[RMDB]
RNA sequence: GGGAACGACUCGAGUAGAGUCGAAAAGAUAUGGAUUGUCUCCAGGACACGAAGAACUAAAACACCUGCUAGAUCGGAAACGAUCUAGCAGGUGUUUUAGGGAGUGUUAGGAGAGCAAUCCUAAGUCCAUACUUUUUAACUUCGGUUAAAAAGUAUGAAAAGAAACAACAACAACAAC
Reactivity to DMS in 0.01 (KOAc 150mM, MgCl2 10mM, bicine 150mM(pH8.5), 24C), signal-to-noise 2, nucleotides 027 to 126: g010a110u010a300u020g000g000a030u000u000g020u000c000u010c000c000a150g000g010a000c000a020c010g000a130a230g010a140a250c010u000a010a010a010a030c000a040c010c000u000g030c010u000a010g020a020u020c000g020g000a130a080a210c030g000a010u000c000u000a010g030c000a000g030g010u000g000u000u000u000u010a000g000g000g000a050g030u000g010u000u000a160g000g000a020g000a080g000c000a010a000u000c000c000u000a030a110g000u010c050